[RMDB]
RNA sequence: GGGAACGACUCGAGUAGAGUCGAAAACUCUUUCGCUCACACGCACGGCGCCUCCCCCACAGUUCUCCGAUUCCAAUUUUCCGCAAGGAAUGUCAUCGCGACCGCCCCGCCGGUGUCUGGACACCCGCACAUUAAAAACGUUCGCGUUUUUAAUGUGAAAAGAAACAACAACAACAAC
Reactivity to DMS in 0.01 (KOAc 150mM, MgCl2 10mM, bicine 150mM(pH8.5), 24C), signal-to-noise 2, nucleotides 027 to 126: c070u000c070u010u000u020c050g020c030u000c080a080c100a100c090g000c040a060c080g000g000c030g020c030c020u000c040c000c000c020c020a090c160a100g010u010u000c040u000c020c020g000a120u000u000c040c030a080a070u010u010u000u000c010c020g030c250a090a160g010g010a000a010u000g000u000c060a060u000c040g000c080g020a070c040c040g010c020c000c020c060g010c060c050g010g000u000g000u000c040u000g000g000a090c070a070c000c000c050g030